[RMDB]
RNA sequence: GGGAACGACUCGAGUAGAGUCGAAAAGCAAGAUGCUUCGGCAUCUUGCAGUCGUAGCGCGAUCGACAGAAUAACAGCUAUGUCGAACGAGGAAGAGCGCGCACAUCAUCCCUUUCGAGGGAUGAAAGGUAUAGUGAGUAUUCGUACUCACUAUACCAAAAGAAACAACAACAACAAC
Reactivity to DMS in 0.01 (KOAc 150mM, MgCl2 10mM, bicine 150mM(pH8.5), 24C), signal-to-noise 9, nucleotides 027 to 126: g010c000a010a000g000a010u000g010c000u000u010c250g030g010c000a010u000c000u000u000g010c000a040g010u000c040g020u000a060g010c010g010c000g010a110u000c000g010a020c010a020g010a130a110u000a090a130c270a110g010c100u000a110u000g010u000c000g010a030a080c060g010a120g010g010a080a060g000a100g000c010g010c010g020c020a090c190a150u000c000a010u000c000c000c000u000u000u010c140g010a020g000g000g000a010u000g000a000a060a060
Reactivity to 2A3 in 0.01 (KOAc 150mM, MgCl2 10mM, bicine 150mM(pH8.5), 24C), signal-to-noise 9, nucleotides 027 to 126: g000c000a000a000g000a010u010g000c010u050u130c230g100g000c000a000u000c000u000u000g000c000a000g040u030c040g020u030a030g000c000g000c010g020a040u020c010g020a010c000a010g110a110a050u220a230a080c070a060g100c100u100a050u110g000u000c000g010a030a050c030g030a100g120g140a080a040g040a020g080c010g000c000g000c010a020c010a060u030c000a000u010c000c000c000u000u040u040c210g090a010g000g000g000a000u000g000a040a050a010